Description:
Structure probing data (DMS and 2A3) for a 177-nucleotide construct. Conditions: 150 mM KOAc, 10 mM MgCl2 and 150 mM bicine (pH 8.5), 24 C. For 2A3 the reverse transcriptase was SuperScript II with manganese. DMS adducts were read by reverse transcription with MarathonRT. Values cover nucleotides 27 to 126.
RNA sequence: GGGAACGACUCGAGUAGAGUCGAAAAAUCAAACUCUGCCCACUCAGCGGCUCGUAGCUCUCCAGGGCGCUGAAAGAGUAAUGGCGCAAGCCGCAACGCGCACGACACAGGCAGUGUUCCGGCAUAGUCUAAGAGCCAAAUUCGUUUGGCUCUUAGAAAAAGAAACAACAACAACAAC
Reactivity to DMS in 0.01 (KOAc 150mM, MgCl2 10mM, bicine 150mM(pH8.5), 24C), signal-to-noise 5, nucleotides 027 to 126: a070u010c120a120a080a100c020u000c020u000g010c040c010c040a200c180u000c040a070g020c010g020g010c020u000c030g020u000a110g010c040u000c030u010c050c030a150g000g000g000c050g000c020u000g010a050a110a080g000a050g020u000a090a100u010g000g020c010g020c130a120a100g020c030c020g020c110a070a080c110g000c030g010c040a090c070g020a060c110a070c120a100g010g000c040a060g000u000g000u000u010c090c020g010g030c090a100u000a110g000
Reactivity to 2A3 in 0.01 (KOAc 150mM, MgCl2 10mM, bicine 150mM(pH8.5), 24C), signal-to-noise 1, nucleotides 027 to 126: a000u100c040a060a040a060c030u030c030u080g010c010c010c000a020c030u050c000a010g030c010g280g000c030u000c020g090u080a050g030c000u000c010u000c100c010a050g040g000g000c040g000c000u020g030a060a120a030g040a010g060u130a160a120u170g030g000c010g000c080a050a020g040c000c000g010c020a050a000c010g060c010g020c010a050c070g090a010c040a010c050a090g120g000c030a020g030u020g000u100u000c030c010g020g000c010a080u130a060g050